This 207-nucleotide RNA was probed chemically with DMS and 2A3. For DMS the reverse transcriptase was MarathonRT.
[RMDB]
RNA sequence: GGGAACGACUCGAGUAGAGUCGAAAAUCCACUAUGAAUCUAGUCACUAAAUAAACACAAUUAGCUACUGUGUGUAAUAGUGAGUGUUGUUAACACAAAAUAAUAGUAUAGUUUUGGAAGAUUAUACGCGCCCUUGCUCCGUUCGCGGAGCAAGGAAGCUAAUAAACCACUUCGGUGGUUUAUUAGCAAAAGAAACAACAACAACAAC
Reactivity to DMS in 0.01 (KOAc 150mM, MgCl2 10mM, bicine 150mM(pH8.5), 24C), signal-to-noise 2, nucleotides 027 to 156: u010c000c010a170c130u000a240u000g020a140a160u010c110u000a100g010u000c000a010c010u000a010a010a060u000a130a240a010c000a020c010a040a040u010u000a170g010c150u000a070c030u000g040u030g020u000g030u000a140a300u000a010g020u000g020a120g020u000g000u000u000g000u000u000a130a110c030a080c050a080a040a050a070u010a080a300u010a050g000u010a020u000a080g010u000u000u000u010g000g000a240a280g020a020u000u020a050u000a010c030g010c130g020c110c000c040u010u010g020c000u000c020c010g000u000u000c300g000c010g070g020a020g010c000a010a000g010g010a020a030
Reactivity to 2A3 in 0.01 (KOAc 150mM, MgCl2 10mM, bicine 150mM(pH8.5), 24C), signal-to-noise 3, nucleotides 027 to 156: u030c010c000a040c070u160a170u280g200a170a100u130c110u110a060g100u060c000a000c000u000a000a070a060u070a020a090a000c000a000c000a040a070u150u150a110g050c090u160a070c060u020g000u000g000u000g010u020a030a000u000a030g000u000g010a040g020u040g000u000u050g030u050u070a170a030c020a010c010a130a060a070a160u210a100a090u070a140g010u000a000u010a030g030u000u040u120u250g090g040a090a060g010a100u020u030a000u050a020c000g010c000g070c030c000c000u000u000g000c010u000c000c000g000u060u040c040g060c020g140g010a000g000c000a000a000g000g000a000a000
For 2A3, 1,071 sequencing reads were counted.